[RMDB]
RNA sequence: GGGAACGACUCGAGUAGAGUCGAAAAUCUCAUAGAGUCGCUUACCUCUGACCUGACUCCGUUAAGGACUCGGAGGUACCAACCCCAACGGAUGCCCUUAAUAGCUACCUCUGGUUGGCUGUUGAGCUAAGACUACACCAGAGCAUCCCACCGUUCGCAAAUUCAAUGAGUUCGCUCAUUGAAUUUGAAAAGAAACAACAACAACAAC
Reactivity to DMS in 0.01 (KOAc 150mM, MgCl2 10mM, bicine 150mM(pH8.5), 24C), signal-to-noise 2, nucleotides 027 to 156: u010c010u000c010a130u010a160g030a060g040u000c010g030c040u000u010a020c010c000u020c030u010g010a080c040c030u010g010a170c020u000c020c060g030u000u010a150a160g000g000a080c070u000c030g020g000a030g010g000u000a040c080c050a060a110c050c010c020c030a080a070c060g010g020a060u000g010c020c180c010u010u010a060a110u000a030g010c040u000a040c030c020u020c060u010g010g000u010u000g030g010c010u000g010u000u000g000a070g010c080u000a100a270g000a150c090u020a080c100a050c040c020a080g010a050g020c040a070u010c030c010c010a080c030c060g010u000u000c080g010
Reactivity to 2A3 in 0.01 (KOAc 150mM, MgCl2 10mM, bicine 150mM(pH8.5), 24C), signal-to-noise 4, nucleotides 027 to 156: u010c020u010c010a050u140a080g010a000g020u020c020g020c110u080u130a050c010c000u040c010u010g020a020c000c000u010g020a020c020u000c060c030g000u020u070a050a040g030g020a060c130u000c070g020g000a000g000g000u020a040c020c030a050a070c010c020c010c060a020a000c010g010g000a010u020g000c010c010c000u020u020a020a010u020a050g010c010u010a020c010c010u040c050u060g020g020u030u030g010g010c010u020g020u020u030g010a010g000c010u040a080a010g040a060c090u100a050c130a030c040c010a020g000a020g040c010a070u050c020c010c000a060c050c080g080u070u040c010g010